[RMDB]
RNA sequence: GGGAACGACUCGAGUAGAGUCGAAAAAUUAGCUCUGCCCGCUCUGGAUUAAGUUUGUCUGUGGUUUAAUCUAAGAGCGUCAUAAACGCAGACUGGUCCCUGGAUUUGUUUACUAGAAAGGGAUAAGAUGUUUUGUAAACUGGUUGAUAUAUGGGUUCUAAUAAGCUAACUUCGGUUAGCUUAUUAGAAAAGAAACAACAACAACAAC
Reactivity to 2A3 in 0.01 (KOAc 150mM, MgCl2 10mM, bicine 150mM(pH8.5), 24C), signal-to-noise 1, nucleotides 027 to 156: a000u140u050a010g010c000u010c080u140g060c010c000c000g050c000u000c000u010g000g010a000u000u000a000a000g000u000u020u060g050u110c030u020g010u010g020g020u000u000u000a010a010u000c000u070a300a000g000a010g000c000g000u030c030a060u100a260a120a000c020g010c010a000g010a020c010u010g070g000u000c000c000c000u000g000g040a010u140u100u230g000u000u080u040a050c050u040a010g010a000a060a000g000g010g000a000u000a040a010g030a000u200g120u090u150u120u230g000u080a000a060a020c000u030g120g050u060u020g030a010u050a030u040a070u300g060g060g000u010u000